[RMDB]
RNA sequence: GGGAACGACUCGAGUAGAGUCGAAAAAGCGCACGGUACGCCGUGCGCAAGAAUCUGUUCGUAGUAUAGCGAAACAGGGUAAUAUAAAGAAAUGUACACUAAGAAACGAGCCUUACGAGGCUCGCAAAAAAGUCUUUAUCGUUCGCGAUAAAGACAACAACGUUCUUUGGUUCGCCAAAGAACGUUGAAAAGAAACAACAACAACAAC
Reactivity to 2A3 in 0.01 (KOAc 150mM, MgCl2 10mM, bicine 150mM(pH8.5), 24C), signal-to-noise 1, nucleotides 027 to 156: a000g000c000g020c010a000c000g030g020u090a080c230g080c010c000g000u000g040c000g000c000a000a000g000a020a140u040c010u010g000u000u010c040g020u010a110g040u030a130u030a140g000c020g020a100a090a010c000a000g110g010g000u060a120a070u140a050u060a190a030a000g100a050a040a000u080g070u090a010c090a010c100u130a140a050g050a020a180a000c000g000a000g000c000c000u030u040a020c090g020a080g000g000c000u000c000g000c010a080a080a010a000a000a000g000u010c000u000u000u000a000u000c020g000u020u090c300g000c010g100a000u000a000a000a000g000a000c000a010a010